[RMDB]
RNA sequence: GGGAACGACUCGAGUAGAGUCGAAAAACGCUACAGGUGAGCUGCCUGGAUUCAGGUCCCUGCUCCACCACUUGCUGUGUGACUUGGAACAAGAUCCUUACCAUCUCAUUUUUCUGCAAAGUGAGAAUAAUAGUAAUGCCUGCCCUAUGGUGCUGAAUAUAGUAAAAUGCUUCGGCAUUUUACUAUAAAAAGAAACAACAACAACAAC
Reactivity to 2A3 in 0.01 (KOAc 150mM, MgCl2 10mM, bicine 150mM(pH8.5), 24C), signal-to-noise 1, nucleotides 027 to 156: a000c030g030c030u100a060c030a090g000g010u040g040a020g000c060u030g010c020c030u020g000g040a090u190u090c030a030g000g010u020c030c000c030u000g000c020u030c000c010a050c010c010a010c030u020u090g000c020u000g010u020g040u050g010a050c000u010u070g000g020a140a010c010a130a000g020a070u030c010c000u030u040a020c010c010a050u000c010u000c020a010u000u000u000u070u100c020u110g100c060a030a040a000g000u000g000a000g030a020a000u090a050a090u120a020g160u090a070a050u100g000c020c020u030g060c040c000c010u060a050u090g030g000u040g010c020u020g010a060a050
Reactivity to DMS in 0.01 (KOAc 150mM, MgCl2 10mM, bicine 150mM(pH8.5), 24C), signal-to-noise 2, nucleotides 027 to 156: a110c060g030c020u000a030c040a060g030g030u000g010a130g030c060u010g020c030c030u000g000g030a110u010u010c100a180g020g020u000c040c000c030u000g000c030u020c050c020a060c060c030a110c070u010u010g020c030u000g010u000g020u000g030a060c030u000u010g020g010a040a100c040a080a100g010a130u010c030c030u000u000a070c030c010a150u000c000u000c000a030u000u000u000u020u000c090u040g010c120a050a040a040g030u010g010a050g000a120a100u010a030a100u000a070g010u000a060a090u010g020c020c040u000g020c040c020c020u000a130u000g000g020u000g040c020u000g020a090a170
An RNA of 207 nucleotides, treated with 2A3 and DMS and read out base by base.
The 2A3 profile rests on 657 reads.
The data come from the RNA Mapping Database (RMDB), library OK3TST.
The reactions ran in a buffer of 150 mM KOAc, 10 mM MgCl2 and 150 mM bicine (pH 8.5), at 24 C.